[RMDB]
RNA sequence: GGGAACGACUCGAGUAGAGUCGAAAAUGUGUGUAGGAUUCCAAAUGAUCACCAUUAAAUUUGGUACAAAUUUUCAUAAAAGUUAUCACAUGGGUGUGGGACUUGACUUUUUUUAGAGAUUUGUGUCGAUACUCUAAUCGUUCGCGAUUAGAGUAUCAAAAGAAACAACAACAACAAC
Reactivity to DMS in 0.01 (KOAc 150mM, MgCl2 10mM, bicine 150mM(pH8.5), 24C), signal-to-noise 2, nucleotides 027 to 126: u010g030u000g010u000g020u000a090g000g010a110u010u000c040c040a040a060a090u000g000a100u000c070a110c030c010a080u000u000a060a110a070u010u010u020g000g000u010a040c010a010a030a020u000u000u010u010c020a050u010a020a020a020a030g010u010u000a050u000c030a020c030a050u010g000g000g010u000g060u000g010g000g010a090c200u000u020g020a010c010u000u020u010u000u010u000u020a170g000a040g000a020u000u010u000g010u000g010u000c080
Reactivity to 2A3 in 0.01 (KOAc 150mM, MgCl2 10mM, bicine 150mM(pH8.5), 24C), signal-to-noise 2, nucleotides 027 to 126: u060g060u010g040u030g070u130a100g090g110a160u190u040c030c010a010a100a080u130g040a030u070c030a030c010c010a010u020u150a070a140a140u210u210u210g010g000u010a000c000a000a060a050u030u020u010u110c020a010u070a080a020a010a000g020u020u060a060u100c000a010c030a100u120g250g040g040u130g030u000g000g040g050a050c040u030u070g010a020c000u010u020u050u030u000u070u160a080g000a010g010a010u020u080u020g040u000g000u040c050
Structure probing data (DMS and 2A3) for a 177-nucleotide construct. The reactions ran in a buffer of 150 mM KOAc, 10 mM MgCl2 and 150 mM bicine (pH 8.5), at 24 C. Values cover nucleotides 27 to 126. For 2A3, 1,306 sequencing reads were counted. 2A3 adducts were read by reverse transcription with SuperScript II with manganese.